[RMDB]
RNA sequence: GGGAACGACUCGAGUAGAGUCGAAAAGAGACAGUAGACACUGGGGGUCCAGUGGUAGUCAGGCCAGUGAUAGUGAGGGACAUUCAGAAGAGUCAGACACACAGUCAGUGUCAGGCCAUGGACAGGCGGUACAAUUAACCUUCGGGUUAAUUGUACCAAAAGAAACAACAACAACAAC
Reactivity to 2A3 in 0.01 (KOAc 150mM, MgCl2 10mM, bicine 150mM(pH8.5), 24C), signal-to-noise 3, nucleotides 027 to 126: g070a010g020a000c020a030g120u150a020g040a070c030a000c050u020g010g000g010g040g030u090c030c010a020g020u020g010g070u040a030g050u070c040a020g060g000c050c020a030g020u020g110a050u050a070g070u060g020a040g010g020g000a040c020a060u070u090c030a080g020a160a010g000a140g050u030c030a030g030a020c000a000c000a000c030a060g120u120c040a010g010u050g000u000c010a000g000g030c000c010a030u050g000g000a020c030a050g020g070c050
Reactivity to DMS in 0.01 (KOAc 150mM, MgCl2 10mM, bicine 150mM(pH8.5), 24C), signal-to-noise 3, nucleotides 027 to 126: g000a090g000a080c070a060g010u010a060g000a110c040a040c030u000g010g000g020g040g010u010c040c020a040g000u000g010g010u000a050g020u010c060a070g020g000c050c040a070g000u000g000a060u000a080g020u000g010a080g000g000g000a060c080a100u010u010c070a080g000a070a080g000a100g020u000c020a090g000a070c030a030c050a100c130a140g000u000c090a040g020u000g010u000c010a080g000g010c030c040a060u000g000g000a100c090a100g000g010c190